[RMDB]
Chemical mapping of a 177-nucleotide RNA with 2A3 and DMS. The reactions ran in a buffer of 150 mM KOAc, 10 mM MgCl2 and 150 mM bicine (pH 8.5), at 24 C. For DMS the reverse transcriptase was MarathonRT. For 2A3, 2,918 sequencing reads were counted.
RNA sequence: GGGAACGACUCGAGUAGAGUCGAAAAGAUAUGGACCUGUAGAGCGCCACCUACCCACCUCGGAAACGAGAGGGUGGACCCGCUCCACAGGUCCUAAGUCAAACGCAGGAUGUUCGCAUCCUGCGAAGACAUAAAUCCCGUUCGCGGGAUUUAUGUCAAAAGAAACAACAACAACAAC
Reactivity to 2A3 in 0.01 (KOAc 150mM, MgCl2 10mM, bicine 150mM(pH8.5), 24C), signal-to-noise 1, nucleotides 027 to 126: g020a010u060a030u200g000g000a000c000c010u010g000u010a010g010a000g050c040g020c090c080a120c020c020u040a060c080c030c000a130c050c000u000c000g040g000a050a050a030c020g020a000g000a030g020g010g000u000g010g000a030c070c010c020g010c000u000c000c000a010c000a000g000g000u000c000c000u000a000a000g010u000c020a000a000a040c000g000c000a000g000g020a010u020g040u050u160c300g000c180a000u000c000c020u000g000c000g000a010a020
Reactivity to DMS in 0.01 (KOAc 150mM, MgCl2 10mM, bicine 150mM(pH8.5), 24C), signal-to-noise 2, nucleotides 027 to 126: g000a020u000a300u000g000g000a000c030c010u000g040u010a030g000a000g020c010g000c090c090a150c050c020u020a030c040c010c030a250c190c000u010c000g000g000a120a080a150c000g000a020g000a300g010g000g010u010g010g020a090c160c300c070g030c020u000c020c010a000c030a020g000g000u010c010c000u000a000a050g000u000c020a080a140a090c010g000c010a030g010g010a010u000g000u000u010c170g000c020a010u000c000c030u010g000c000g000a040a040